[RMDB]
RNA sequence: GGGAACGACUCGAGUAGAGUCGAAAAGAUAUGGACGUUCCUACACUCCAACAGCUCGGAAACGAGACAUGGAGCGGUAGGAGACGUCCUAAGUCAAAACUUUUUAUCGCUUCGGCGAUAAAAAGAACUCUACUUCCAACUUCGGUUGGAAGUAGAGAAAAGAAACAACAACAACAAC
Reactivity to 2A3 in 0.01 (KOAc 150mM, MgCl2 10mM, bicine 150mM(pH8.5), 24C), signal-to-noise 1, nucleotides 027 to 126: g040a040u070a090u100g000g000a000c000g030u000u030c000c000u000a000c000a000c010u000c000c000a080a120c040a240g030c020u000c010g060g000a100a070a030c020g020a010g050a050c020a070u160g000g000a000g020c300g110g010u000a000g000g000a040g030a010c000g000u000c000c000u000a040a010g060u050c040a010a050a100a140c000u010u000u040u000u000a000u020c000g000c000u060u070c300g170g000c010g010a010u010a000a000a000a000a000g020a000a000
Reactivity to DMS in 0.01 (KOAc 150mM, MgCl2 10mM, bicine 150mM(pH8.5), 24C), signal-to-noise 1, nucleotides 027 to 126: g010a020u000a300u000g000g000a010c000g010u000u000c000c000u000a030c000a180c000u000c000c000a020a140c160a140g000c000u020c000g000g000a170a110a160c030g020a020g000a040c090a270u000g000g000a000g040c050g000g000u000a000g000g000a010g000a010c010g060u000c010c000u010a000a090g000u000c020a090a060a110a190c020u000u010u000u000u000a000u000c000g000c020u000u020c300g050g030c000g000a000u000a000a000a020a000a010g010a060a180
This 177-nucleotide RNA was probed chemically with 2A3 and DMS.
For 2A3, 1,885 sequencing reads were counted.
The RNA was probed in 150 mM KOAc, 10 mM MgCl2 and 150 mM bicine (pH 8.5) at 24 C.
The DMS profile rests on 874 reads.
High 2A3 reactivity points to a flexible backbone, as in loops and unpaired stretches.
For 2A3 the reverse transcriptase was SuperScript II with manganese.